This 207-nucleotide RNA was probed chemically with 2A3.
For 2A3 the reverse transcriptase was SuperScript II with manganese.
The data come from the RNA Mapping Database (RMDB), library OK3TST.
As a SHAPE reagent, 2A3 marks flexible, mostly unpaired nucleotides at the ribose 2'-OH.
The 2A3 profile rests on 745 reads.
Conditions: 150 mM KOAc, 10 mM MgCl2 and 150 mM bicine (pH 8.5), 24 C.

RNA sequence: GGGAACGACUCGAGUAGAGUCGAAAACUUUGGGCAAAACCAUUCUGAUAGCCGAAUUAGCAGCUAGAGCGUCAUCUUUGUGCGGCAAACGAGUAACGUUAACCAUGGUGGGGUCUAAAUUGUCUUGAUUUGUGGUCGAUGACUAAGAGCCCUUGGCCCCCACGAACGACUUCGGUCGUUCGUGGGGAAAAGAAACAACAACAACAAC
Reactivity to 2A3 in 0.01 (KOAc 150mM, MgCl2 10mM, bicine 150mM(pH8.5), 24C), signal-to-noise 1, nucleotides 027 to 156: c020u020u070u090g020g010g000c020a010a040a050a080c000c000a030u080u010c030u100g040a030u060a020g020c010c010g020a030a080u070u030a130g030c090a010g000c010u070a030g000a000g000c030g030u020c060a160u000c100u030u090u060g020u100g030c020g030g000c040a080a030a000c060g010a010g090u120a070a020c030g000u020u060a040a000c050c010a000u030g030g010u070g000g050g010g000u010c000u010a100a060a050u070u110g030u040c030u040u020g080a140u040u020u030g090u030g040g000u020c010g060a030u130g000a030c020u020a020a060g000a020g080c000c050c000u000u010g060g000c000